[RMDB]
RNA sequence: GGGAACGACUCGAGUAGAGUCGAAAAUUAAUUGCGACAAUGCUUUUAAUUACAAAACUAUUCAGCGUAUAUUAUCUGGUCUUGCUCAAAUUGGUACUUAUAUAUGCUUUGAUGAGUUCAACAGGUACACGUAUAUUAGGUUCGCCUAAUAUACGUGAAAAGAAACAACAACAACAAC
Reactivity to 2A3 in 0.01 (KOAc 150mM, MgCl2 10mM, bicine 150mM(pH8.5), 24C), signal-to-noise 7, nucleotides 027 to 126: u000u000a000a010u000u020g010c020g050a070c150a160a140u150g010c000u010u020u010u020a020a010u030u040a050c050a020a180a050a040c020u040a080u110u120c030a020g030c020g060u050a050u010a030u200u050a020u050c020u040g020g030u020c040u060u060g000c010u020c060a080a090a120u040u040g020g010u030a030c040u180u020a050u020a020u010a000u210g000c000u070u040u040g050a050u040g020a010g020u040u080c030a080a050c010a040g070g000u060a060
Reactivity to DMS in 0.01 (KOAc 150mM, MgCl2 10mM, bicine 150mM(pH8.5), 24C), signal-to-noise 9, nucleotides 027 to 126: u000u000a010a010u000u000g010c010g020a180c260a160a130u010g020c000u000u000u000u000a010a020u000u000a140c100a100a100a080a090c040u000a060u000u000c060a060g020c060g010u000a030u000a050u000u000a040u000c030u010g010g010u000c070u000u000g010c060u000c080a030a060a110u000u000g010g010u010a050c150u000u000a060u010a050u000a110u010g010c020u000u000u000g010a170u000g000a090g020u000u000c110a040a090c090a040g020g010u000a100
Source: RMDB library OK2TST, as collected in RNAgym. An RNA of 177 nucleotides, treated with 2A3 and DMS and read out base by base. DMS adducts were read by reverse transcription with MarathonRT. Reactivities are given for positions 27 through 126. The reactions ran in a buffer of 150 mM KOAc, 10 mM MgCl2 and 150 mM bicine (pH 8.5), at 24 C.